[RMDB]
RNA sequence: GGGAACGACUCGAGUAGAGUCGAAAAAUCAAAACCUGGGACGACCCGCAGAUCGCUGCGCUCAACCCCGGCGUGAACCUGCCCGGCACCGCGGUAGUUCCGCUGCACCGCUCCGACGGGUCCGGUGCAUCCCUACGUGGUUCGCCACGUAGGGAUGAAAAGAAACAACAACAACAAC
Reactivity to DMS in 0.01 (KOAc 150mM, MgCl2 10mM, bicine 150mM(pH8.5), 24C), signal-to-noise 3, nucleotides 027 to 126: a050u010c060a120a080a120a100c060c010u000g000g000g010a060c210g000a100c150c150c040g020c040a060g030a160u000c250g030c040u000g030c030g000c210u000c080a080a300c050c020c010c030g000g020c030g010u000g010a030a030c120c030u000g000c030c020c020g000g040c060a040c030c050g010c100g010g010u000a030g010u000u000c030c050g020c110u000g010c030a040c020c040g020c040u010c020c010g000a100c130g000g010g000u000c050c020g010g020u000g000
Reactivity to 2A3 in 0.01 (KOAc 150mM, MgCl2 10mM, bicine 150mM(pH8.5), 24C), signal-to-noise 2, nucleotides 027 to 126: a000u070c030a030a030a030a090c020c050u030g050g000g020a030c040g050a020c000c020c020g000c010a000g030a080u160c070g010c300u020g000c010g010c020u060c060a100a140c010c000c010c000g010g020c030g010u080g020a060a030c000c030u030g000c010c000c000g030g000c080a020c030c070g000c030g010g020u010a030g010u080u050c040c010g020c060u020g000c010a020c020c000g040c020u040c010c020g240a280c040g090g010g050u020c020c020g010g020u030g030
Structure probing data (DMS and 2A3) for a 177-nucleotide construct.
Values are in units of 0.01, from 0 to 300, in steps of 10.
It was measured as part of the RMDB library OK2TST.